[RMDB]
RNA sequence: GGGAACGACUCGAGUAGAGUCGAAAAUAUGUCCUGCAGGCCACCGUUCUGGCCAUGCUGUUCGUCUAUAUGAUUCACCCACUCUCAACUAUGGUGCGAUUUGGGCAGUUUUUGGUGGACCAUGUAAGGUGACCUAUUAGUUCGCUAAUAGGUCACCAAAAGAAACAACAACAACAAC
Reactivity to 2A3 in 0.01 (KOAc 150mM, MgCl2 10mM, bicine 150mM(pH8.5), 24C), signal-to-noise 2, nucleotides 027 to 126: u230a120u070g040u010c010c000u030g010c010a010g010g000c000c000a050c030c070g120u140u100c050u080g060g000c000c000a000u030g000c000u110g070u110u030c050g040u000c080u000a050u000a030u160g070a080u040u050c030a050c010c010c030a020c020u020c010u020c050a010a110c020u060a060u190g140g000u110g100c030g020a020u040u020u040g010g010g000c030a010g030u010u000u020u130u180g050g000u010g010g050a080c020c020a070u060g060u030a170a060
Reactivity to DMS in 0.01 (KOAc 150mM, MgCl2 10mM, bicine 150mM(pH8.5), 24C), signal-to-noise 2, nucleotides 027 to 126: u010a110u000g020u000c010c000u010g010c020a060g010g000c010c010a040c110c210g020u010u000c080u010g010g010c000c010a030u000g020c060u000g030u020u020c120g010u010c080u000a020u010a030u000g000a090u000u000c050a060c020c010c300a060c050u000c020u000c040a030a090c140u000a060u000g010g000u000g020c060g010a100u000u000u000g010g000g010c090a010g000u000u000u000u000u000g020g010u000g000g000a070c010c010a050u010g010u000a040a100

Structure probing data (2A3 and DMS) for a 177-nucleotide construct. Reactivities are given for positions 27 through 126. For DMS the reverse transcriptase was MarathonRT. For 2A3, 1,953 sequencing reads were counted. The reactions ran in a buffer of 150 mM KOAc, 10 mM MgCl2 and 150 mM bicine (pH 8.5), at 24 C.